[RMDB]
RNA sequence: GGGAACGACUCGAGUAGAGUCGAAAAGGUAGUCGGAGACGACUACCCACGAUCAGUUCGCUGAUCGGAGCGUUCACGGGACAGGCAAGCCGGAACGAGCAAGUGCCUCACUUGCCUCAACCGAGAAAGCGGAAGAACACAAAAAGCGAGAGGCACGGACCAUCAUACACUUCGGUGUAUGAUGGUCAAAAGAAACAACAACAACAAC
Reactivity to 2A3 in 0.01 (KOAc 150mM, MgCl2 10mM, bicine 150mM(pH8.5), 24C), signal-to-noise 2, nucleotides 027 to 156: g020g000u000a020g000u000c000g000g020a040g050a020c000g000a000c010u000a000c000c000c010a020c010g000a000u010c000a000g040u140u120c160g020c070u020g000a000u000c000g000g000a060g010c040g000u000u000c040a010c120g000g000g030a020c050a030g000g000c020a010a000g040c030c000g030g010a050a030c000g020a050g030c000a050a060g020u010g030c000c000u020c000a040c000u020u000g000c010c000u000c040a070a100c010c000g010a020g120a280a060a000g120c050g050g010a050a020g030a160a040c110a000c040a070a010a140a000a020g030c060g030a070g000a000g000g000c000a000c000g010
The record gives the reactivity of an RNA of 207 nucleotides to 2A3. 2A3 adducts were read by reverse transcription with SuperScript II with manganese. The 2A3 profile rests on 1,026 reads.